[RMDB]
RNA sequence: GGGAACGACUCGAGUAGAGUCGAAAACAGGGGCAAUAUAGCAGCAAGUGACGGUUAACUGAUGCGCUAUUAUUGCUAGUUGAAAACUACUUCAAUAAGUGGAAACGACGCUUGCGUCGGGUCCCAAAAUAGGCUAGUAUUUCGAUACUAGCCUAUUAAAAGAAACAACAACAACAAC
Reactivity to DMS in 0.01 (KOAc 150mM, MgCl2 10mM, bicine 150mM(pH8.5), 24C), signal-to-noise 9, nucleotides 027 to 126: c050a130g010g020g010g010c000a000a010u000a010u000a010g010c010a120g060c010a150a180g010u020g010a300c300g010g010u030u040a100a090c010u010g000a070u010g010c020g010c010u000a010u010u020a010u000u000g000c020u000a050g010u000u000g000a070a050a090a090c100u010a040c060u010u010c180a090a090u020a030a060g010u010g010g010a050a050a090c010g000a030c020g000c020u010u000g010c040g010u000c000g000g010g010u000c000c000c010a060a040
Reactivity to 2A3 in 0.01 (KOAc 150mM, MgCl2 10mM, bicine 150mM(pH8.5), 24C), signal-to-noise 9, nucleotides 027 to 126: c020a010g180g040g030g000c000a010a000u010a000u000a000g050c190a010g010c000a010a040g060u040g160a120c140g180g100u290u210a080a020c010u070g120a300u050g130c010g000c000u000a010u170u050a010u010u010g000c000u000a010g000u000u020g020a010a020a030a030c040u070a030c010u040u070c090a110a210u190a270a020g030u050g070g020a080a050a020c010g010a000c000g000c020u020u060g000c010g010u000c010g020g050g030u010c010c000c010a010a050
Conditions: 150 mM KOAc, 10 mM MgCl2 and 150 mM bicine (pH 8.5), 24 C.
The record gives the reactivity of an RNA of 177 nucleotides to DMS and 2A3.
For DMS the reverse transcriptase was MarathonRT.
Values cover nucleotides 27 to 126.